[RMDB]
RNA sequence: GGGAACGACUCGAGUAGAGUCGAAAACAGAAUCGGAACGCUGACCAGCAGCAGCCAUGUCAGCGCGGCCUCCUGGUGGAUGGCCAUGAUGAUUCCGCCGACGCACAUGAUCGGUGCGGUGACCAGCCGCACCAAGCAGGUUCGCCUGCUUGGUGCGAAAAGAAACAACAACAACAAC
Reactivity to DMS in 0.01 (KOAc 150mM, MgCl2 10mM, bicine 150mM(pH8.5), 24C), signal-to-noise 6, nucleotides 027 to 126: c100a100g010a030a030u000c020g010g010a160a300c080g010c000u000g000a030c030c230a300g000c010a190g020c210a110g010c010c010a140u000g000u000c000a000g000c020g030c180g010g010c010c010u000c020c010u000g030g010u010g010g010a040u010g050g020c010c010a040u020g020a170u020g000a050u000u000c010c050g020c050c030g010a140c000g000c050a040c050a090u010g010a110u000c110g000g010u000g000c020g000g000u000g000a200c050c050a110g010c170
Reactivity to 2A3 in 0.01 (KOAc 150mM, MgCl2 10mM, bicine 150mM(pH8.5), 24C), signal-to-noise 5, nucleotides 027 to 126: c030a020g040a030a020u040c030g010g040a040a050c030g000c020u010g000a010c000c040a010g020c010a010g060c040a010g010c030c010a110u230g020u000c010a000g000c030g000c030g050g000c000c010u030c020c010u250g230g100u240g070g060a090u170g030g000c000c000a010u060g030a020u050g000a000u010u010c010c010g020c010c010g040a060c010g080c010a060c020a140u220g080a250u270c090g050g000u020g010c020g000g020u030g050a060c020c030a020g040c030
Notes:
Conditions: 150 mM KOAc, 10 mM MgCl2 and 150 mM bicine (pH 8.5), 24 C. The record gives the reactivity of an RNA of 177 nucleotides to DMS and 2A3. Values cover nucleotides 27 to 126. DMS adducts were read by reverse transcription with MarathonRT.